[RMDB]
This 207-nucleotide RNA was probed chemically with 2A3 and DMS. It was measured as part of the RMDB library OK3TST. For DMS, 4,121 sequencing reads were counted. The RNA was probed in 150 mM KOAc, 10 mM MgCl2 and 150 mM bicine (pH 8.5) at 24 C. The 2A3 profile rests on 2,790 reads. For 2A3 the reverse transcriptase was SuperScript II with manganese.

RNA sequence: GGGAACGACUCGAGUAGAGUCGAAAACGUUGUCCUUGACCUGCGGGCAACGGAAGAGCCUGGUCUUGAAGACCUCCAUGAGCUCGUCGCUGAUGGUGUAGAAGCUGUCCUUGAUGGAAUUUUUGGUGUCUAGAGAGAUGGCGGCGUGUCGGAUGAGGCACGCUAAUGAUUUCGAUCAUUAGCGUGCAAAAGAAACAACAACAACAAC
Reactivity to 2A3 in 0.01 (KOAc 150mM, MgCl2 10mM, bicine 150mM(pH8.5), 24C), signal-to-noise 4, nucleotides 027 to 156: c010g000u000u000g020u020c000c000u060u140g170a130c020c030u070g010c040g000g000g000c020a020a020c010g000g020a040a010g030a000g050c020c030u060g010g020u000c000u070u180g140a150a040g010a060c020c000u020c030c020a100u080g050a020g020c020u020c100g060u040c020g030c020u060g010a030u030g040g020u050g010u040a030g020a100a020g000c030u020g020u020c010c020u040u080g010a070u080g020g060a070a070u090u060u030u070u130g100g000u080g010u030c030u040a020g010a010g000a010g000a080u100g030g020c020g010g020c030g000u030g030u010c040g040g030a030u080g000a110g090
Reactivity to DMS in 0.01 (KOAc 150mM, MgCl2 10mM, bicine 150mM(pH8.5), 24C), signal-to-noise 2, nucleotides 027 to 156: c020g020u000u000g010u000c000c030u000u000g020a100c130c070u020g040c100g050g010g010c010a020a020c000g020g000a030a100g020a080g030c020c000u000g000g020u000c040u020u020g020a230a190g000a040c010c000u020c020c080a110u010g010a150g000c010u000c040g040u000c030g000c060u000g020a060u000g020g040u000g020u010a140g030a130a200g020c010u000g060u010c010c040u000u000g060a190u000g010g040a080a130u010u000u000u000u100g030g010u010g000u020c030u020a180g000a210g020a070g020a070u010g030g020c030g040g010c000g050u010g010u020c010g000g000a180u010g010a160g020